The record gives the reactivity of an RNA of 177 nucleotides to 2A3 and DMS.
For 2A3, 2,204 sequencing reads were counted.
It was measured as part of the RMDB library M2PK90.
The RNA was probed in 150 mM KOAc, 10 mM MgCl2 and 150 mM bicine (pH 8.5) at 24 C.

RNA sequence: GGGAACGACUCGAGUAGAGUCGAAAACAUUAGCUUCGGCAUCCCACCCUACGGCUUCGAAAAGCUGAGAUGAGCUCAGCAAGGGAACUCUAGAGACUCAACUCAGAGAACUCAGAGAGAGAAUAAAACCAAAGAGUAAAUUCGUUUACUCUUUGGUAAAAGAAACAACAACAACAAC
Reactivity to 2A3 in 0.01 (KOAc 150mM, MgCl2 10mM, bicine 150mM(pH8.5), 24C), signal-to-noise 2, nucleotides 027 to 126: c030a040u110u140a030g020c010u060u040c120g060g020c000a080u020c010c020c020a050c000c010c010u030a040c060g060g000c000u050u050c020g030a060a090a050a000g000c010u000g010a010g010a080u160g070a020g070c000u000c030a000g000c010a010a040g000g000g010a030a030c000u010c010u040a070g020a040g000a110c010u020c090a080a100c060u010c110a060g010a010g000a100a030c010u010c030a010g020a000g010a000g010a000g020a220a070u130a080a100a020
Reactivity to DMS in 0.01 (KOAc 150mM, MgCl2 10mM, bicine 150mM(pH8.5), 24C), signal-to-noise 3, nucleotides 027 to 126: c040a100u000u020a110g020c010u010u000c090g030g010c060a120u000c010c020c020a230c050c040c020u010a070c080g010g000c040u000u000c070g000a120a090a080a100g010c000u010g010a010g010a270u000g010a120g010c000u000c000a000g010c020a060a070g030g010g030a060a160c010u000c040u000a080g010a060g000a100c070u000c110a060a110c090u010c120a060g010a050g010a040a110c020u000c010a060g010a050g010a090g000a090g010a090a110u010a050a070a090